[RMDB]
RNA sequence: GGGAACGACUCGAGUAGAGUCGAAAAUGACCCGGCUGCGGGAAAAACUGCGUUACCUUGCAGAGUGUGGCGUUGAUUACGUGCUGUGCGUGCGUUUCGACAGGCGUUUCGCGGCGUUAACCGCGCAUGAGUCAUUUCAUUUCGAUGAAAUGACUCAAAAAGAAACAACAACAACAAC
Reactivity to 2A3 in 0.01 (KOAc 150mM, MgCl2 10mM, bicine 150mM(pH8.5), 24C), signal-to-noise 1, nucleotides 027 to 126: u040g090a060c000c000c030g040g000c090u140g070c040g020g010g180a020a110a000a000a000c020u020g040c010g000u010u070a050c000c010u040u160g090c000a010g010a080g060u190g020u060g050g000c080g050u060u060g100a160u090u140a020c030g030u050g090c070u100g090u120g030c060g000u040g000c070g000u000u030u030c050g040a040c050a060g000g050c050g000u060u060u010c020g000c020g000g000c000g020u070u030a090a040c030c010g000c000g020c040a060
Reactivity to DMS in 0.01 (KOAc 150mM, MgCl2 10mM, bicine 150mM(pH8.5), 24C), signal-to-noise 3, nucleotides 027 to 126: u010g010a180c010c020c030g010g010c020u010g000c030g000g010g000a070a070a060a120a100c030u010g010c020g010u000u010a070c040c040u000u000g030c070a100g010a100g020u010g020u000g010g020c030g000u010u000g010a110u000u010a030c070g030u000g000c050u000g020u010g000c070g020u000g020c060g010u000u000u000c040g010a070c110a110g000g000c060g000u000u010u010c010g010c030g010g020c060g000u010u010a070a150c060c010g010c010g020c150a120